[RMDB]
RNA sequence: GGGAACGACUCGAGUAGAGUCGAAAACGAAGAUCUUACUGAUCUAUUUAGCGAUUUUUGCACCGGUGGCGAUGUCGGCGCUGGCGGGGGUGAAAAGCGUGCAGCAGGUUCGCAUUCGUGCCGCCCAGCCUCCACAGUUAUUCGUAACUGUGGAGGCAAAAGAAACAACAACAACAAC
Reactivity to DMS in 0.01 (KOAc 150mM, MgCl2 10mM, bicine 150mM(pH8.5), 24C), signal-to-noise 1, nucleotides 027 to 126: c020g000a080a060g000a000u000c000u010u010a180c150u010g000a040u000c080u010a170u020u000u020a180g000c070g000a080u000u040u000u000u000g000c020a120c030c010g000g020u000g000g020c070g010a130u010g030u010c100g030g000c040g010c030u000g020g000c020g000g000g000g020g050u000g020a060a010a060a150g010c050g010u010g010c010a080g020c150a080g000g000u000u000c030g020c040a210u000u000c050g020u000g000c150c090g000c000c000c010a120
Reactivity to 2A3 in 0.01 (KOAc 150mM, MgCl2 10mM, bicine 150mM(pH8.5), 24C), signal-to-noise 1, nucleotides 027 to 126: c040g030a020a010g010a020u090c000u070u210a170c120u100g020a020u000c020u090a140u070u170u180a030g020c000g050a030u000u000u000u010u300g010c050a050c030c110g300g080u040g020g000c030g030a050u140g090u150c030g130g000c060g000c070u030g000g020c010g010g020g000g030g000u060g060a000a000a040a040g040c030g060u050g050c050a050g000c000a000g000g070u050u080c020g000c020a000u000u050c020g040u010g050c000c040g000c000c000c000a040